[RMDB]
RNA sequence: GGGAACGACUCGAGUAGAGUCGAAAAAUUAAUUUUUGAGAUCUUACUGCUUGUCACUUGAAUCCCGUGAUUGUCAUACAUCUCUGGUAUAAGCAACAUUUGAUUUUUGAAGUGUGUAGACCAUCUCCUCACUAUUCCACUUCGGUGGAAUAGUGAGAAAAGAAACAACAACAACAAC
Reactivity to DMS in 0.01 (KOAc 150mM, MgCl2 10mM, bicine 150mM(pH8.5), 24C), signal-to-noise 1, nucleotides 027 to 126: a070u000u010a070a050u010u000u000u010u010g000a300g000a000u000c010u010u000a060c060u000g000c020u000u000g010u000c010a100c170u010u000g040a120a100u000c000c020c020g050u000g000a040u010u010g000u000c050a080u000a040c050a060u000c060u010c070u010g020g020u010a040u010a060a060g000c050a040a040c070a060u000u000u000g020a090u000u000u000u020u020g000a050a080g040u010g020u000g010u000a090g000a090c030c090a100u000c040u010c050
Reactivity to 2A3 in 0.01 (KOAc 150mM, MgCl2 10mM, bicine 150mM(pH8.5), 24C), signal-to-noise 1, nucleotides 027 to 126: a000u120u060a030a080u060u010u030u020u020g060a070g000a030u020c010u000u100a020c020u090g120c010u060u030g010u010c020a030c090u020u100g100a090a030u050c000c010c010g000u010g020a060u050u030g000u060c060a030u050a090c010a020u090c040u040c030u090g050g000u140a140u020a150a050g140c050a020a090c020a130u080u160u160g100a090u000u080u070u010u210g060a050a050g020u020g010u020g020u040a020g030a010c000c020a050u000c020u000c040
Chemical mapping of a 177-nucleotide RNA with DMS and 2A3. The reactions ran in a buffer of 150 mM KOAc, 10 mM MgCl2 and 150 mM bicine (pH 8.5), at 24 C. As a SHAPE reagent, 2A3 marks flexible, mostly unpaired nucleotides at the ribose 2'-OH. Reactivities are rounded to 0.1 and cut off at 0 and 3.